[RMDB]
RNA sequence: GGGAACGACUCGAGUAGAGUCGAAAAAUUGGGAAAUCUGAAUCUUACUGGAAAAGUGAUAAAAAGUAAAGUGGACAGAGAACUUUAGAGAAUCCCUUCAUGAAUUUGGUAUUUGUUCUUUAUUACUCUUAACUCAUGAUGACCUAUUUAAAACCUAGCUGAUUAGCAUAUUCGUAUGCUAAUCAGCAAAAGAAACAACAACAACAAC
Reactivity to 2A3 in 0.01 (KOAc 150mM, MgCl2 10mM, bicine 150mM(pH8.5), 24C), signal-to-noise 2, nucleotides 027 to 156: a000u070u030g000g000g030a000a140a050u040c040u000g010a050a050u090c030u110u060a070c040u080g040g060a080a040a080a020g100u120g040a050u070a110a080a070a010a000g020u050a030a060a150g030u060g090g000a040c040a050g040a000g040a130a030c040u150u150u100a090g030a020g030a120a070u030c020c000c000u030u070c050a060u040g170a130a130u130u060u040g040g020u010a120u030u040u070g070u090u000c000u060u100u020a070u040u090a110c000u000c000u090u120a050a030c000u010c020a000u140g020a040u040g050a110c000c000u020a020u080u090u110a050a110a030a010c060c010u030a010
This 207-nucleotide RNA was probed chemically with 2A3. The reactions ran in a buffer of 150 mM KOAc, 10 mM MgCl2 and 150 mM bicine (pH 8.5), at 24 C. The 2A3 profile rests on 918 reads. The data come from the RNA Mapping Database (RMDB), library OK3TST. Values cover nucleotides 27 to 156.